[RMDB]
RNA sequence: GGGAACGACUCGAGUAGAGUCGAAAAGGCCAAUAUUCGUAUUGGCCAAAAAAACCUUUGUGUACGUGGAUUUGAUGACCGGGAGCACCCAUUGGGUGCAUCGAUCGCAAGAAUAGAGCGUACACUCUGGUAAAAAAGUCUCUGUUCGCAGAGACAAAGACGAUCCUCUAUUCGUAGAGGAUCGUCUAAAAGAAACAACAACAACAAC
Reactivity to 2A3 in 0.01 (KOAc 150mM, MgCl2 10mM, bicine 150mM(pH8.5), 24C), signal-to-noise 1, nucleotides 027 to 156: g000g000c010c000a000a000u030a030u020u300c300g030u010a010u020u010g000g030c010c030a000a000a140a000a000a000a000c050c000u040u010u000g010u010g000u000a000c020g010u050g000g100a170u090u030u070g300a300u210g000a000c000c010g050g010g010a170g040c010a000c000c000c110a280u030u300g010g000g020u000g000c010a000u000c030g000a000u000c020g010c060a020a110g020a170a080u240a160g180a040g010c000g000u000a000c000a010c000u000c000u000g000g070u230a200a110a000a000a000a000g000u000c000u000c010u000g060u070u160c190g000c010a000g000a000g040a000c020a000a050